[RMDB]
RNA sequence: GGGAACGACUCGAGUAGAGUCGAAAAAGGCUGGAAAAGACCAAUCUUCCAGCUCAAACAGGCAGGAGUUCCCCUUACUCAGCAUUUUUGUUCUGCUUUGGUUUUCAGUUGAUUGGAUGAGACCCACUCAGCAGUAGGGAGGGCCCUCGCCUCACUACCCAUAGUAAAAUUUCGAUUUUACUAUGGGAAAAGAAACAACAACAACAAC
Reactivity to DMS in 0.01 (KOAc 150mM, MgCl2 10mM, bicine 150mM(pH8.5), 24C), signal-to-noise 2, nucleotides 027 to 156: a090g000g000c010u010g010g000a050a040a090a150g010a160c050c050a070a110u000c040u010u000c000c000a010g020c000u000c050a050a080a140c090a060g020g010c020a050g000g010a070g000u000u000c000c000c000c030u000u000a040c040u000c030a060g000c030a090u000u020u010u010u000g000u000u000c020u010g010c050u000u010u000g030g010u010u000u000u000c020a060g010u010u020g000a080u000u000g030g020a170u010g000a080g020a100c020c020c150a020c040u000c050a100g010c080a080g000u010a070g000g010g000a050g000g010g000c020c010c010u000c050g020c000c000u000c040a020c050u000a140
Reactivity to 2A3 in 0.01 (KOAc 150mM, MgCl2 10mM, bicine 150mM(pH8.5), 24C), signal-to-noise 4, nucleotides 027 to 156: a000g000g000c010u000g000g060a010a040a060a040g150a120c020c020a020a040u000c000u010u000c000c000a000g000c020u000c040a140a150a020c100a000g010g000c010a000g010g050a250g070u140u200c010c000c000c010u020u020a010c010u010c060a030g020c030a100u060u050u080u250u300g140u260u140c040u050g000c000u090u040u030g020g000u030u030u010u030c030a030g020u040u030g030a020u010u030g000g020a010u010g010a000g010a020c010c030c030a060c090u200c070a060g010c020a010g020u030a010g030g030g000a250g040g000g010c010c000c000u040c070g000c010c000u000c000a010c000u110a090